RNA sequence: GGGAACGACUCGAGUAGAGUCGAAAAGAUAUGGAAUAAACCUGCCACUUUCCUGUGCAAGGAUCCAGGUCGGAAACGACCUGAAUCUGAUGACCACAGGGAAAGUGGCAGGUUUAUUCCUAAGUCAGUAAUAAUAGGUGUUCGCACCUAUUAUUACAAAAGAAACAACAACAACAAC
Reactivity to DMS in 0.01 (KOAc 150mM, MgCl2 10mM, bicine 150mM(pH8.5), 24C), signal-to-noise 4, nucleotides 027 to 126: g010a040u010a300u000g000g010a040a000u020a000a010a010c010c000u000g020c000c000a020c020u010u000u000c000c000u000g000u000g000c010a070a170g000g000a000u000c020c000a010g010g020u010c000g000g000a120a120a280c010g000a010c000c000u000g010a020a000u000c000u010g020a070u010g000a200c300c000a000c000a000g000g010g000a000a000a020g030u000g010g000c000a000g000g010u000u000u000a000u000u000c000c000u010a010a090g010u000c060a200

Source: RMDB library TTRINS, as collected in RNAgym. Structure probing data (DMS) for a 177-nucleotide construct. The RNA was probed in 150 mM KOAc, 10 mM MgCl2 and 150 mM bicine (pH 8.5) at 24 C. Values cover nucleotides 27 to 126.